This 207-nucleotide RNA was probed chemically with 2A3. The data come from the RNA Mapping Database (RMDB), library OK3TST. Conditions: 150 mM KOAc, 10 mM MgCl2 and 150 mM bicine (pH 8.5), 24 C.

RNA sequence: GGGAACGACUCGAGUAGAGUCGAAAACAGAUGGGUGGGUAGACUGACUAUUAGAGUAUAGAUGAAUUAAUAGGUAAAUAACUAGAUGGACAGAUGAAUGGAUGGCUGGACGGAUGACUAGAUACUCACUUGAUCUCUACCCUGCUGUCCUUCCUCCGUUCAUUCCUCGAUUCGUCGAGGAAUGAACAAAAGAAACAACAACAACAAC
Reactivity to 2A3 in 0.01 (KOAc 150mM, MgCl2 10mM, bicine 150mM(pH8.5), 24C), signal-to-noise 1, nucleotides 027 to 156: c040a070g010a100u100g000g000g110u100g000g000g000u050a020g020a070c040u060g090a000c000u070a060u180u130a030g000a000g050u010a010u020a080g070a010u050g100a120a070u080u160a190a090u070a120g010g060u070a060a170a060u190a100a190c100u060a040g020a040u070g010g000a020c020a040g030a070u100g030a130a000u000g000g020a020u010g000g020c080u020g000g020a000c070g010g060a110u190g070a000c040u020a010g020a100u170a070c030u090c090a040c030u090u120g050a130u080c000u000c000u060a000c100c020c000u030g060c000u020g000u010c000c000u000u000c000c000u000c000c000